[RMDB]
RNA sequence: GGGAACGACUCGAGUAGAGUCGAAAAACGGAUGGUACGCCAUCCGACCAUUGGGUAGAAGCGUUCAAUCAGCACCGUGACGGUGCAGAUAGGAAAUUGCCCAUGAUACGCACCAUACGUGGUGCGAAAAAGCCAUCGGUGUUCGCACCGAUGGCAAGCUUUACUAUAACUUCGGUUAUAGUAAAGCAAAAGAAACAACAACAACAAC
Reactivity to 2A3 in 0.01 (KOAc 150mM, MgCl2 10mM, bicine 150mM(pH8.5), 24C), signal-to-noise 5, nucleotides 027 to 156: a000c000g000g000a000u000g010g030u060a050c250g040c030c000a000u010c000c000g020a010c010c010a070u040u080g020g000g010u040a070g050a150a020g070c060g050u060u050c050a010a030u010c020a020g010c000a000c000c010g110u230g280a120c260g000g000u010g000c020a010g000a000u020a020g040g040a030a060a090u030u010g000c000c000c000a000u080g040a020u040a030c010g000c000a000c000c010a010u040a110c270g100u060g000g000u000g000c000g000a020a010a000a000a000g000c000c000a000u000c000g000g020u020g030u070u090c190g020c050a000c000c000g000a000u000g000g000c000a000a000
Reactivity to DMS in 0.01 (KOAc 150mM, MgCl2 10mM, bicine 150mM(pH8.5), 24C), signal-to-noise 2, nucleotides 027 to 156: a170c030g000g020a030u000g000g030u000a100c270g060c040c000a020u000c030c030g010a070c020c010a170u000u000g020g030g010u000a060g010a100a170g030c190g020u000u010c050a130a020u000c030a110g000c030a010c000c000g070u010g000a150c230g010g030u020g040c000a040g000a060u000a170g000g000a020a160a110u000u000g010c000c000c000a060u010g000a120u000a060c030g000c010a020c010c020a050u000a070c210g040u000g020g020u000g000c010g000a010a050a080a100a120g000c020c000a030u010c000g040g000u010g000u030u010c300g020c000a050c000c010g020a020u000g000g040c030a000a030
The record gives the reactivity of an RNA of 207 nucleotides to 2A3 and DMS.